[RMDB]
RNA sequence: GGGAACGACUCGAGUAGAGUCGAAAACAAAACAGUUCCACGUAAAUUGUUUGAACUCCUAUAUUAUUAUAUCAGUCGUGGCUGACAAGGAUAGAGUCGCAAAUCUAUUCUUAUUUAUUAUGGGUUGUUGGAGAAAAGAGUUCGCUCUUUUCUCCAAAAAAGAAACAACAACAACAAC
Reactivity to DMS in 0.01 (KOAc 150mM, MgCl2 10mM, bicine 150mM(pH8.5), 24C), signal-to-noise 1, nucleotides 027 to 126: c100a070a060a010a070c080a060g000u060u000c020c010a010c000g030u000a050a080a030u000u020g000u000u010u000g000a050a250c030u000c020c000u020a100u060a120u050u030a060u040u000a070u030a140u060c000a060g020u020c000g020u030g000g010c020u010g000a090c210a060a000g000g000a010u000a000g000a010g020u020c300g020c260a060a080a140u000c000u010a000u000u000c000u000u010a100u020u000u030a030u010u000a080u030g000g000g020u010u010g000

An RNA of 177 nucleotides, treated with DMS and read out base by base. The data come from the RNA Mapping Database (RMDB), library RFM100. Conditions: 150 mM KOAc, 10 mM MgCl2 and 150 mM bicine (pH 8.5), 24 C.